[RMDB]
RNA sequence: GGGAACGACUCGAGUAGAGUCGAAAAUUCGGUCAAGCGGUAGAACUCUUUGUAUAUCGGCACGUACUCGGCAGUUAGCGAGUUCAUCUUGCCUCGGUAGUUAAUGACGUCGUAGUCCAUCUCGUUAAGCACGUACAUAGGUGUACCCACAAACAUGUGCCUAUAAAUAAUUCGUUAUUUAUAGGCAAAAAGAAACAACAACAACAAC
Reactivity to DMS in 0.01 (KOAc 150mM, MgCl2 10mM, bicine 150mM(pH8.5), 24C), signal-to-noise 4, nucleotides 027 to 156: u000u010c050g010g020u000c030a070a150g030c030g030g020u020a070g020a080a080c050u000c040u000u000u010g030u000a090u010a070u000c030g020g010c020a070c080g010u010a050c030u000c030g000g030c040a120g010u000u000a110g020c020g000a070g020u000u000c040a080u000c040u000u010g010c040c010u000c050g050g030u000a090g010u010u010a080a130u010g010a060c030g030u010c050g040u000a090g000u010c030c010a030u000c000u000c040g020u000u010a040a100g010c030a060c040g030u000a060c050a100u000a070g020g010u000g020u000a070c020c030c000a070c070a060a070a100c080a110u000g010
Reactivity to 2A3 in 0.01 (KOAc 150mM, MgCl2 10mM, bicine 150mM(pH8.5), 24C), signal-to-noise 3, nucleotides 027 to 156: u010u000c010g020g010u040c020a050a020g020c030g020g020u020a010g030a080a040c020u010c020u040u120u070g050u030a080u010a000u130c020g010g020c040a010c050g010u020a010c000u000c010g050g000c020a060g040u060u080a030g010c000g020a000g000u010u040c020a030u000c020u060u040g010c000c000u030c040g040g050u050a050g020u010u140a090a050u150g010a010c020g010u080c020g000u020a010g010u000c030c020a050u030c020u020c040g040u020u060a060a020g000c030a010c080g030u090a030c020a110u120a010g000g010u040g020u060a040c010c010c000a050c070a030a060a070c040a040u000g020
Record summary: Chemical mapping of a 207-nucleotide RNA with DMS and 2A3. For DMS, 11,329 sequencing reads were counted. It was measured as part of the RMDB library OK3TST. For 2A3, 2,872 sequencing reads were counted. 2A3 adducts were read by reverse transcription with SuperScript II with manganese. DMS adducts were read by reverse transcription with MarathonRT. Conditions: 150 mM KOAc, 10 mM MgCl2 and 150 mM bicine (pH 8.5), 24 C.